[RMDB]
RNA sequence: GGGAACGACUCGAGUAGAGUCGAAAAGAGAAACGGCUACCAGGUCUAAGGACAGCAGCAGGCGCGAAACUUGCCCAAUUGGAGAGAGGCAGUUAUGAGACGUAUAUUUUGUAACCGGGGUAGAAUAGACUGGAAACGAGUUCGCUCGUUUCCAGUCAAAAGAAACAACAACAACAAC
Reactivity to DMS in 0.01 (KOAc 150mM, MgCl2 10mM, bicine 150mM(pH8.5), 24C), signal-to-noise 1, nucleotides 027 to 126: g020a220g000a050a020a070c170g020g000c000u000a140c000c090a110g000g010u010c000u000a000a160g020g020a010c040a110g010c110a040g000c080a070g020g040c010g020c070g000a000a090a090c070u000u000g000c000c040c000a090a070u000u000g000g000a140g020a000g000a070g000g010c140a020g000u000u000a050u050g000a120g010a020c160g060u000a190u010a030u020u000u000u020g010u070a030a000c050c070g000g000g000g000u000a000g000a070a090u000a040

An RNA of 177 nucleotides, treated with DMS and read out base by base. Conditions: 150 mM KOAc, 10 mM MgCl2 and 150 mM bicine (pH 8.5), 24 C. The data come from the RNA Mapping Database (RMDB), library RFM100.